The record gives the reactivity of an RNA of 177 nucleotides to DMS and 2A3.
[RMDB]
RNA sequence: GGGAACGACUCGAGUAGAGUCGAAAAGAUAUGGACUGUGGGAGCUGGUGGGUCGGAAACGACCCAUGCAGCAUCGAUCACAGGUCCUAAGUCGAGCGUUUGACACGACUUCGGUCGUGUCAAACAAGUCGUAGUAAAAGUUCGCUUUUACUACGACAAAAGAAACAACAACAACAAC
Reactivity to DMS in 0.01 (KOAc 150mM, MgCl2 10mM, bicine 150mM(pH8.5), 24C), signal-to-noise 6, nucleotides 027 to 126: g000a030u000a300u000g000g000a160c000u000g010u000g010g010g000a050g020c000u000g000g030u000g000g000g000u010c000g010g000a040a050a090c010g000a010c000c000c000a010u000g010c000a010g020c300a140u000c100g010a190u010c000a010c010a020g010g010u000c000c000u000a020a120g010u000c010g000a170g020c250g000u000u000u000g000a010c000a010c000g000a020c010u000u020c210g010g000u000c000g010u000g000u010c000a000a000a000c000a100a100
Reactivity to 2A3 in 0.01 (KOAc 150mM, MgCl2 10mM, bicine 150mM(pH8.5), 24C), signal-to-noise 5, nucleotides 027 to 126: g000a000u030a020u090g000g010a010c010u000g000u020g020g020g010a050g110c010u000g000g020u010g010g000g010u000c010g020g010a090a030a010c010g000a010c000c060c020a020u090g090c030a000g010c030a100u070c010g010a010u070c010a000c020a030g140g230u050c000c000u030a060a010g050u020c040g050a080g120c220g040u000u010u020g020a010c000a000c010g050a020c010u090u100c300g030g010u000c010g000u010g000u000c000a000a000a000c010a000a020

For 2A3 the reverse transcriptase was SuperScript II with manganese.